[RMDB]
RNA sequence: GGGAACGACUCGAGUAGAGUCGAAAACUAGAUAGAGUCUCAACCUUGAAAGCAUCAAGCGCAUUUGACGAAUCAUGGUACACUUACAACCCUGACAAAUCAUAUCACCGAAAGAAAGUGAUCGAAAACUUUCAGAAGUUCAUAACUGCAGAGCACACCCUCCAUGCGUAUUCGUACGCAUGGAGGGAAAAGAAACAACAACAACAAC
Reactivity to 2A3 in 0.01 (KOAc 150mM, MgCl2 10mM, bicine 150mM(pH8.5), 24C), signal-to-noise 1, nucleotides 027 to 156: c040u040a040g190a170u100a040g030a070g090u000c010u000c010a100a120c000c060u060u090g010a030a010a030g100c030a120u030c060a060a000g000c090g000c070a010u100u020u150g030a070c070g100a060a000u130c010a030u130g040g000u060a130c120a010c040u140u140a030c160a000a130c000c000c060u060g000a040c010a000a090a040u160c040a040u000a030u180c000a030c000c000g010a030a110a030g030a060a060a060g000u000g010a000u030c000g060a000a000a090a090c070u000u000u000c010a000g060a300a000g070u040u040c120a060u200a150a090c070u060g030c090a000g020a030g010c000a050c000a020

This 207-nucleotide RNA was probed chemically with 2A3. 2A3 adducts were read by reverse transcription with SuperScript II with manganese. The data come from the RNA Mapping Database (RMDB), library OK3TST. Reactivities are given for positions 27 through 156.